[RMDB]
RNA sequence: GGGAACGACUCGAGUAGAGUCGAAAAGAUAUGGACAGGUGGCCACUGGAGCCUCGGCAUCGGAAACGAUGCGGAGGCUAUGAAGGUGGAAUCCUGUCCUAAGUCAAAAGCGAGCUUCGGCUCGCAACGAGUAAUUUACGUUCGCGUAAAUUACUCGAAAAGAAACAACAACAACAAC
Reactivity to 2A3 in 0.01 (KOAc 150mM, MgCl2 10mM, bicine 150mM(pH8.5), 24C), signal-to-noise 3, nucleotides 027 to 126: g020a000u090a050u160g000g000a010c010a000g000g050u080g150g210c010c000a000c010u010g030g040a000g000c020c000u010c070g250g000c000a010u020c020g060g000a130a020a060c010g000a010u010g020c060g080g010a010g010g020c000u040a150u000g010a030a010g000g010u020g010g010a010a030u040c010c010u010g000u000c000c000u000a020a010g030u000c000a040a070a030a100g010c010g010a000g000c000u090u300c300g180g010c040u000c000g000c010a010a010
Reactivity to DMS in 0.01 (KOAc 150mM, MgCl2 10mM, bicine 150mM(pH8.5), 24C), signal-to-noise 3, nucleotides 027 to 126: g000a030u010a300u000g000g000a010c000a010g000g000u010g010g010c000c000a020c000u000g000g010a030g010c000c020u000c000g010g050c000a000u000c010g030g000a180a110a180c000g010a000u000g000c000g010g010a000g000g010c010u000a000u010g000a200a200g010g000u000g000g010a110a050u010c000c000u000g000u000c000c010u000a000a050g000u010c020a100a090a120a170g000c010g000a010g010c000u000u010c200g030g010c000u000c000g010c000a010a030
An RNA of 177 nucleotides, treated with 2A3 and DMS and read out base by base. For 2A3 the reverse transcriptase was SuperScript II with manganese. It was measured as part of the RMDB library TTRDES. The DMS profile rests on 3,189 reads.